The record gives the reactivity of an RNA of 177 nucleotides to 2A3 and DMS. For 2A3, 2,834 sequencing reads were counted. Reactivities are given for positions 27 through 126. The RNA was probed in 150 mM KOAc, 10 mM MgCl2 and 150 mM bicine (pH 8.5) at 24 C.
RNA sequence: GGGAACGACUCGAGUAGAGUCGAAAAGAUAUGGAAACACUCGAGCGAUAAGCUGGUGUCGGAAACGACACACAGCUUUUGACGCUCUUGUGUUUCCUAAGUCAAAACGCCUACUUCGGUAGGCGAAUCUUGAUAGCUGGUUCGCCAGCUAUCAAGAAAAAGAAACAACAACAACAAC
Reactivity to 2A3 in 0.01 (KOAc 150mM, MgCl2 10mM, bicine 150mM(pH8.5), 24C), signal-to-noise 1, nucleotides 027 to 126: g000a000u050a010u080g010g020a000a000a000c000a010c000u000c020g030a010g000c150g150a190u070a300a010g020c000u000g060g030u020g010u000c000g020g070a080a020a010c070g000a010c010a020c050a010c020a000g000c040u010u010u010u020g040a010c110g000c000u010c000u020u000g000u000g000u000u010u000c000c000u000a000a000g020u000c000a020a000a090a170c010g000c000c000u000a000c000u100u050c300g130g050u030a000g000g040c010g000a020a010
Reactivity to DMS in 0.01 (KOAc 150mM, MgCl2 10mM, bicine 150mM(pH8.5), 24C), signal-to-noise 2, nucleotides 027 to 126: g000a040u000a260u010g000g010a020a030a010c000a000c010u010c110g010a010g020c010g010a090u030a010a060g020c000u000g020g000u000g020u000c000g000g000a050a050a110c010g020a020c010a010c000a090c000a010g010c000u000u000u000u000g030a220c110g020c000u010c010u010u000g000u000g020u000u010u010c010c000u000a000a080g010u000c040a120a090a130a130c010g010c000c000u000a010c000u000u030c170g030g000u000a000g000g010c000g000a010a010